[RMDB]
RNA sequence: GGGAACGACUCGAGUAGAGUCGAAAAAAAUGGGUCAUGCAGAGAAAUGGAAUCUAGGCCUGGCUCUGCCACAGCCUUCCUUCCUUGGUCACCUUAAUUAAGCCCCUUGUGCUCCCAAGCCUUAGUACUCCCAGUUGUAAAAUACGGGGCUUAACUCACGUACUACUAUCUUCGGAUAGUAGUACGUAAAAGAAACAACAACAACAAC
Reactivity to 2A3 in 0.01 (KOAc 150mM, MgCl2 10mM, bicine 150mM(pH8.5), 24C), signal-to-noise 2, nucleotides 027 to 156: a000a000a000u120g030g000g000u080c060a020u190g020c050a030g000a000g040a150a070a060u140g060g020a070a010u110c050u110a040g000g030c000c000u010g010g020c030u090c180u300g040c040c010a070c020a010g020c010c000u010u010c030c020u030u060c000c030u010u040g030g000u070c030a080c060c020u110u090a100a030u130u010a070a000g020c020c020c000c010u060u100g070u100g040c030u050c040c010c010a010a040g000c000c010u070u080a040g060u060a110c050u100c070c020c020a050g020u110u100g040u190a050a080a040a020u070a050c030g010g000g000g060c010u010u020a000a000c000u020c050
Reactivity to DMS in 0.01 (KOAc 150mM, MgCl2 10mM, bicine 150mM(pH8.5), 24C), signal-to-noise 2, nucleotides 027 to 156: a030a050a050u000g020g000g010u000c060a160u010g010c020a110g000a100g000a070a120a100u010g000g010a060a060u000c030u010a070g030g020c020c030u000g010g010c000u000c090u030g000c030c040a080c140a090g000c020c000u000u000c010c010u000u000c010c000u000u000g000g000u000c060a050c060c030u010u020a030a080u010u000a050a070g000c010c000c010c000u000u000g010u010g010c040u000c010c010c020a070a150g030c010c020u000u010a080g030u000a060c090u000c030c010c020a160g020u000u000g010u000a040a040a040a070u010a090c070g020g000g070g010c020u000u000a020a050c080u010c100